Source information
Structure probing data (DMS) for a 177-nucleotide construct. Source: RMDB library M2PK90, as collected in RNAgym. The reactions ran in a buffer of 150 mM KOAc, 10 mM MgCl2 and 150 mM bicine (pH 8.5), at 24 C.
RNA sequence: GGGAACGACUCGAGUAGAGUCGAAAAUUAAAGAACUAUGAUCUGCACUGAACAAGUCACGGUGGUCGGAAACGACGCCGAAAGGCCAGGUCAUAGUUCCGACCUCAAGACUUGACGGGUCAAAAAACAAUCCCUUGUUGUUCGCAACAAGGGAUUGAAAAGAAACAACAACAACAAC
Reactivity to DMS in 0.01 (KOAc 150mM, MgCl2 10mM, bicine 150mM(pH8.5), 24C), signal-to-noise 2, nucleotides 027 to 126: u040u000a070a070a090g000a030a040c040u000a070u000g000a010u010c010u000g000c040a050c060u000g000a130a130c010a020a000g020u000c010a300c110g030g010u010g030g010u000c000g020g020a050a100a110c050g000a000c010g000c000c000g000a100a090a100g000g000c010c220a010g000g010u010c010a000u000a020g000u000u000c000c010g000a010c020c030u000c050a100a140g000a030c000u010u000g020a120c270g000g000g000u010c020a000a020a010a050a020a100